[RMDB]
RNA sequence: GGGAACGACUCGAGUAGAGUCGAAAAUUUAAAUUAGAUGUGGUUCCAGAUGGGUAUAACCCUUUGUUUUGUACUAAGAGUUAUGCAAUUCAACACGUAAGAGGGUGGAUUGGUUUAGAUGUGGAAACUGAACAAAGAGUUUCGACUCUUUGUUCAGAAAAGAAACAACAACAACAAC
Reactivity to DMS in 0.01 (KOAc 150mM, MgCl2 10mM, bicine 150mM(pH8.5), 24C), signal-to-noise 3, nucleotides 027 to 126: u010u010u010a060a070a130u000u020a050g000a090u010g010u000g000g010u000u000c040c060a100g000a070u010g010g020g020u000a020u000a030a020c000c000c020u000u000u000g020u000u010u010u010g020u010a050c020u010a020a010g010a020g010u000u000a010u000g010c020a060a050u000u010c080a070a070c080a050c080g000u000a060a100g000a100g000g020g010u000g010g010a110u000u000g010g010u000u000u000a060g010a080u000g020u010g020g010a050a090a160